[RMDB]
RNA sequence: GGGAACGACUCGAGUAGAGUCGAAAAAUCCAUCGCGCUGGUGGGUAAAGGCAUCACCUUCGAUACCGGUGGAAUUUCUCUCAAGCCAAGCGCUGGCAUGGACGACAUGAUCUCCGAUAUGGGCGGCGCCAUACGAAUACUUCGGUAUUCGUAUGGCAAAAGAAACAACAACAACAAC
Reactivity to 2A3 in 0.01 (KOAc 150mM, MgCl2 10mM, bicine 150mM(pH8.5), 24C), signal-to-noise 2, nucleotides 027 to 126: a010u000c000c000a010u010c040g000c000g030c040u020g000g040u040g030g000g010u140a150a150a040g160g000c030a080u060c020a040c010c000u050u060c040g030a040u080a150c050c030g010g030u020g000g010a040a050u020u060u000c040u000c010u010c050a100a000g000c010c000a120a040g040c070g010c060u040g020g000c030a040u050g030g030a020c070g000a010c010a070u150g070a160u070c040u040c040c040g010a020u050a040u150g060g000g050c000g030g040c020
Reactivity to DMS in 0.01 (KOAc 150mM, MgCl2 10mM, bicine 150mM(pH8.5), 24C), signal-to-noise 3, nucleotides 027 to 126: a050u000c000c010a040u000c020g000c020g000c040u000g000g040u010g020g000g000u020a060a090a110g040g020c110a060u010c060a060c020c000u010u010c060g010a070u010a100c300c070g040g020u010g000g010a020a030u010u000u000c040u000c030u020c120a100a140g010c040c020a090a100g010c090g010c040u000g020g000c020a080u000g010g000a110c100g010a070c120a040u010g000a070u000c050u000c030c030g020a130u000a060u000g010g010g000c020g000g020c130